[RMDB]
RNA sequence: GGGAACGACUCGAGUAGAGUCGAAAAUACAGGGGCGGUAUCAGCAGCCAAAGAAUGCCAGCGCGGCUUCUUCGGUUCACAGACUAGGCGAGUGAUGGGCUGAGCCCUUAGGGGUCUCAGUUCGAGAUAUAGUCGAGCCCCAGGGUCUAAGACCUGGCAAGAAAACAAGGUUCGCCUUGUUUUCUUGAAAAGAAACAACAACAACAAC
Reactivity to DMS in 0.01 (KOAc 150mM, MgCl2 10mM, bicine 150mM(pH8.5), 24C), signal-to-noise 2, nucleotides 027 to 156: u010a130c080a120g000g020g010g000c030g010g020u000a070u010c060a130g030c090a070g000c040c000a000a020a010g000a030a020u010g020c000c000a280g090c230g040c250g060g040c020u020u010c010u000u000c030g020g000u000u000c100a090c080a120g010a070c050u010a050g000g020c020g000a170g030u000g020a150u000g020g000g010c000u000g010a040g010c010c000c010u010u010a050g070g020g010g000u000c010u000c010a030g010u000u000c000g010a060g000a110u000a070u000a120g000u000c020g000a040g000c000c000c000c000a020g010g010g000u000c030u010a080a100g000a090c010c010u000g010g000
Reactivity to 2A3 in 0.01 (KOAc 150mM, MgCl2 10mM, bicine 150mM(pH8.5), 24C), signal-to-noise 2, nucleotides 027 to 156: u140a010c070a060g000g010g010g000c030g090g060u150a050u150c070a030g090c050a000g000c000c000a000a000a010g010a020a020u260g000c000c000a090g100c250g070c200g160g000c000u000u000c000u010u010c010g000g000u060u070c050a040c030a110g030a010c030u030a020g020g110c050g090a040g120u130g060a090u160g020g000g000c030u020g000a000g000c000c000c000u010u060a070g000g000g000g080u090c010u010c040a010g000u000u000c020g020a020g010a020u170a010u030a080g030u030c000g010a010g030c000c000c000c000a000g010g000g000u040c050u160a140a050g020a040c000c000u010g040g040